RNA sequence: GGGAACGACUCGAGUAGAGUCGAAAAUGUAAGCAUCAAACCCUCACCCUGACAAAAAAUGUGGCUUUCUUUCUCUUGAAGAGGUCCUGUCUUUUUCCCUUUUUUGGCUUGUAGUUUUGCUGUAUGACUACAUAAGGGUAUUCGUACCCUUAUGUAGAAAAGAAACAACAACAACAAC
Reactivity to DMS in 0.01 (KOAc 150mM, MgCl2 10mM, bicine 150mM(pH8.5), 24C), signal-to-noise 5, nucleotides 027 to 126: u020g010u010a080a090g000c040a050u010c050a050a100a100c050c010c020u000c050a100c040c020c020u010g010a070c070a010a030a080a060a050a060u010g020u010g000g010c040u000u000u010c020u000u010u000c050u000c070u010u000g010a090a080g010a080g010g010u010c020c010u000g000u000c000u010u000u000u010u000c010c010c010u000u000u000u010u010u000g010g000c080u000u000g010u000a050g000u000u000u000u000g010c030u000g010u010a070u010g010a300
Reactivity to 2A3 in 0.01 (KOAc 150mM, MgCl2 10mM, bicine 150mM(pH8.5), 24C), signal-to-noise 5, nucleotides 027 to 126: u170g010u100a060a050g030c010a060u070c060a070a100a140c010c020c010u030c020a070c010c020c010u020g050a040c070a020a080a010a030a010a040u170g060u100g060g000c000u060u110u030c000u040u110u020c060u020c010u060u150g050a080a030g020a040g040g030u030c000c020u030g050u040c010u050u030u000u020u020c000c000c000u050u060u030u010u060u080g080g010c040u020u060g020u040a080g010u020u030u090u100g010c020u010g050u210a130u140g070a040
Structure probing data (DMS and 2A3) for a 177-nucleotide construct. The RNA was probed in 150 mM KOAc, 10 mM MgCl2 and 150 mM bicine (pH 8.5) at 24 C. 2A3 adducts were read by reverse transcription with SuperScript II with manganese. For DMS the reverse transcriptase was MarathonRT.